[RMDB]
RNA sequence: GGGAACGACUCGAGUAGAGUCGAAAAGUCUCACUUUGACACCCGUGAGGAGAAUGAUGCCACCUGGCUUAACUACCGUGGUGCUAUUAAGUUGCCCAAGGACAACCCAAACUACGCCACGUGGAUGAAACUCCUUAAGGAGAAUGUGGAUGCCUACUAAUGAUCCUCGUUUCGACGAGGAUCAUUAAAAAGAAACAACAACAACAAC
Reactivity to 2A3 in 0.01 (KOAc 150mM, MgCl2 10mM, bicine 150mM(pH8.5), 24C), signal-to-noise 1, nucleotides 027 to 156: g000u000c000u010c160a030c080u100u150u200g050a080c010a170c000c000c000g000u120g020a020g040g010a020g000a110a170u080g010a010u190g230c000c000a040c000c000u030g000g020c000u060u050a080a000c060u040a050c010c000g010u050g030g030u170g000c010u000a060u240u200a110a090g120u060u040g090c030c010c020a000a100g000g000a030c040a060a050c040c010c010a080a050a000c140u090a060c080g000c010c030a030c000g000u000g020g000a040u050g000a020a020a020c000u000c000c000u000u000a000a020g010g000a100g040a020a010u080g020u000g010g020a020u100g010c010c000u050a080c070

Chemical mapping of a 207-nucleotide RNA with 2A3.
2A3 adducts were read by reverse transcription with SuperScript II with manganese.
The RNA was probed in 150 mM KOAc, 10 mM MgCl2 and 150 mM bicine (pH 8.5) at 24 C.